[RMDB]
Background: This 177-nucleotide RNA was probed chemically with DMS and 2A3.
RNA sequence: GGGAACGACUCGAGUAGAGUCGAAAACCUCGACUUCGGAAGGGGUGUAUUUAUUAGAUAAAAAACCAAUGCCCUUCGGGGCUCCUUGGUGAUUCAUGAUAACUUAACGAAUCGCAUGGCCUUGCGCGACUUAUAUCGGGUUCGCCCGAUAUAAGUCAAAAGAAACAACAACAACAAC
Reactivity to DMS in 0.01 (KOAc 150mM, MgCl2 10mM, bicine 150mM(pH8.5), 24C), signal-to-noise 1, nucleotides 027 to 126: c010c020u010c110g000a110c080u000u000c060g030g000a010a180g000g010g020g010u000g010u000a000u000u030u000a030u010u000a050g010a240u020a010a020a120a130a140a020c010c010a000a030u000g000c010c000c010u000u020c220g070g000g010g030c050u000c120c090u000u000g000g010u010g010a110u000u000c150a080u000g000a060u010a040a050c190u000u000a070a120c100g030a020a040u020c060g000c030a020u000g000g000c010c000u030u000g010c050g010c300
Reactivity to 2A3 in 0.01 (KOAc 150mM, MgCl2 10mM, bicine 150mM(pH8.5), 24C), signal-to-noise 1, nucleotides 027 to 126: c000c000u010c030g160a110c160u150u100c060g010g050a020a010g000g020g010g000u020g030u040a070u020u150u030a090u020u080a070g100a120u220a070a160a010a020a020a020c000c000a030a000u090g020c000c000c000u000u020c080g010g000g000g060c080u170c030c000u090u020g000g030u000g000a010u140u030c040a030u100g230a050u020a230a120c060u160u180a100a000c000g110a030a000u020c010g030c030a010u090g050g030c010c000u040u140g050c030g000c040
Background: The reactions ran in a buffer of 150 mM KOAc, 10 mM MgCl2 and 150 mM bicine (pH 8.5), at 24 C. Values cover nucleotides 27 to 126. DMS adducts were read by reverse transcription with MarathonRT.